[RMDB]
RNA sequence: GGGAACGACUCGAGUAGAGUCGAAAAAAAGUGAGAGAACACAGUAACAAAAGCUUGGUGGAAUACCAUGUGGCAUUAUAGCCUGUUGAUGCCAAGUAAAUAUUAAUUGAUCAUUCAUAUUGACAGGUAUUUAAUACUCUGCAUUUCGCAGAUGCUGACUGAAUAGUGUGUUCGCACACUAUUCAGUAAAAGAAACAACAACAACAAC
Reactivity to DMS in 0.01 (KOAc 150mM, MgCl2 10mM, bicine 150mM(pH8.5), 24C), signal-to-noise 3, nucleotides 027 to 156: a050a020a050g040u010g010a110g010a090g010a110a080c080a050c040a170g030u010a090a190c070a090a070a100a110g020c080u000u000g010g050u000g020g010a130a100u000a060c010c020a080u010g030u010g030g010c020a040u010u010a070u000a130g010c010c020u000g010u000u000g010a050u000g020c080c040a040a110g020u000a050a060a060u000a060u010u000a060a110u000u000g010a150u010c070a120u000u000c120a100u000a110u010u000g020a050c010a060g010g020u000a060u000u000u000a030a080u000a090c060u000c010u010g020c030a220u000u010u000c120g030c030a080g000a050u000g030c020u000g000
Reactivity to 2A3 in 0.01 (KOAc 150mM, MgCl2 10mM, bicine 150mM(pH8.5), 24C), signal-to-noise 6, nucleotides 027 to 156: a000a000a000g090u070g000a090g000a020g040a140a000c040a000c020a070g080u160a140a050c080a070a110a040a020g050c030u040u040g020g000u020g020g060a070a040u060a110c010c020a040u070g040u070g050g000c010a000u030u030a030u100a100g020c010c020u020g000u010u030g020a010u010g010c010c010a010a000g020u060a020a060a020u130a030u070u120a070a080u070u090g060a050u120c040a040u140u060c010a010u060a040u120u060g050a020c010a010g000g010u020a060u030u100u050a080a040u090a040c040u010c010u030g010c020a070u100u190u190c120g000c010a010g000a040u040g030c050u060g050
Source: RMDB library OK3TST, as collected in RNAgym. Chemical mapping of a 207-nucleotide RNA with DMS and 2A3. For DMS, 5,358 sequencing reads were counted. The 2A3 profile rests on 4,153 reads. For 2A3 the reverse transcriptase was SuperScript II with manganese. Values cover nucleotides 27 to 156. Reactivities are rounded to 0.1 and cut off at 0 and 3. Conditions: 150 mM KOAc, 10 mM MgCl2 and 150 mM bicine (pH 8.5), 24 C. As a SHAPE reagent, 2A3 marks flexible, mostly unpaired nucleotides at the ribose 2'-OH.